Description
Chemical mapping of a 177-nucleotide RNA with 2A3 and DMS. The reactions ran in a buffer of 150 mM KOAc, 10 mM MgCl2 and 150 mM bicine (pH 8.5), at 24 C. It was measured as part of the RMDB library TTRDES. The 2A3 profile rests on 21,539 reads. In probing experiments dimethyl sulfate is read out at A N1 and C N3, which are open when not base-paired. The DMS profile rests on 10,269 reads.

RNA sequence: GGGAACGACUCGAGUAGAGUCGAAAAGAUAUGGACUGGUGUAGGGAGUCCCUGGUCGGAAACGACCACGGACAUCGAUCUACCCAGUCCUAAGUCAAAGGAAGCGUUACUUCGGUAACGCUUCCAACGUUACUAGGUAGUUCGCUACCUAGUAACGAAAAGAAACAACAACAACAAC
Reactivity to 2A3 in 0.01 (KOAc 150mM, MgCl2 10mM, bicine 150mM(pH8.5), 24C), signal-to-noise 4, nucleotides 027 to 126: g000a010u020a010u050g000g000a000c000u010g000g060u190g040u090a030g050g140g250a220g020u000c000c000c000u010g000g020u000c010g010g000a000a000a010c000g000a000c030c010a000c020g000g000a000c000a040u240c250g130a210u000c000u010a000c000c000c010a000g000u000c000c000u000a000a000g000u010c010a100a030a020g010g000a010a010g000c000g000u000u010a000c010u060u160c300g050g000u000a000a000c010g000c000u000u000c000c000a010a000
Reactivity to DMS in 0.01 (KOAc 150mM, MgCl2 10mM, bicine 150mM(pH8.5), 24C), signal-to-noise 6, nucleotides 027 to 126: g000a000u000a040u010g000g000a020c000u000g000g010u010g040u000a010g020g010g010a210g020u000c000c000c060u000g000g000u010c000g020g010a010a010a030c000g010a010c000c000a000c300g000g010a020c000a150u010c300g020a160u000c000u000a000c000c000c000a000g010u000c000c000u000a000a050g010u000c000a110a160a160g010g000a010a000g010c010g010u000u000a010c000u000u030c240g020g000u000a000a000c000g000c010u000u010c010c000a020a040